[RMDB]
RNA sequence: GGGAACGACUCGAGUAGAGUCGAAAAGUUUGCGCUAACAUUAAAAAUUAGAUUGUCGUUGAACGAUGAAAAAUCUACAGAAAUGGUUCCGAUGACUGUUUUAUCGGCAACGUUGACGACGUAUAUGGUGUCGGGCUUGCCGUCUUUGAUGUACAUGUGUUUGUAGAGGUUUCGACCUCUACAAACAAAAAGAAACAACAACAACAAC
Reactivity to DMS in 0.01 (KOAc 150mM, MgCl2 10mM, bicine 150mM(pH8.5), 24C), signal-to-noise 1, nucleotides 027 to 156: g000u000u000u000g020c070g010c020u010a060a050c050a070u000u000a030a070a120a050a140u000u000a040g010a140u000u000g030u000c010g010u000u000g010a050a150c070g030a060u010g010a010a100a060a050a100u010c030u000a300c080a090g010a050a030a070u010g040g030u000u000c030c060g020a100u000g000a010c030u010g020u010u010u000u000a080u010c000g000g000c030a010a050c030g000u000u010g000a150c000g020a040c000g010u000a140u000a120u000g020g050u000g010u000c040g060g000g020c090u000u000g030c030c000g020u000c020u000u000u010g000a130u000g000u010a130c090a070u000g040
Reactivity to 2A3 in 0.01 (KOAc 150mM, MgCl2 10mM, bicine 150mM(pH8.5), 24C), signal-to-noise 2, nucleotides 027 to 156: g020u020u080u070g040c040g000c030u040a060a010c030a020u110u100a060a020a020a020a060u170u130a100g090a200u050u040g010u000c030g020u010u070g040a080a010c040g030a020u060g120a110a050a000a000a010u090c080u170a060c060a060g180a040a110a040u060g020g020u110u000c070c020g040a020u010g020a020c030u030g060u160u060u000u080a060u100c030g000g000c010a000a000c100g010u020u040g140a090c010g020a000c000g020u060a090u050a170u260g220g000u080g050u050c000g000g010g000c000u000u020g020c000c020g000u000c010u030u020u060g040a070u050g030u060a060c030a120u190g010

Description:
An RNA of 207 nucleotides, treated with DMS and 2A3 and read out base by base. It was measured as part of the RMDB library OK3TST. For DMS, 2,383 sequencing reads were counted.